[RMDB]
RNA sequence: GGGAACGACUCGAGUAGAGUCGAAAACAAGUUCGUGCUUGCGACUUACACGUAGGGCGAGGGGUGGGCGAAAGUUGCCAUGAGACCGUAACUUUCAUAGUCAUUGAUAAAGGGGCAGGUCUCGCUCAAAACCUCCCGUGGUUCGCCACGGGAGGAACUUUCGUACUUUCUUCGGAAAGUACGAAAGAAAAGAAACAACAACAACAAC
Reactivity to 2A3 in 0.01 (KOAc 150mM, MgCl2 10mM, bicine 150mM(pH8.5), 24C), signal-to-noise 2, nucleotides 027 to 156: c030a000a010g000u150u150c020g040u060g060c030u060u120g020c010g080a050c040u100u220a040c050a000c030g050u060a080g000g020g000c080g060a130g040g020g000g100u300g000g000g010c020g060a000a000a000g010u020u000g060c060c100a210u090g000a010g000a000c020c010g000u010a000a010c000u000u040u050c030a000u020a040g140u100c090a100u060u210g130a090u130a060a050a050g010g030g000g000c030a000g040g000u020c000u000c000g000c010u080c010a110a190a080a100c000c000u000c000c010c000g000u000g000g010u050u000c180g030c070c000a000c030g000g000g000a010g000g000a000a000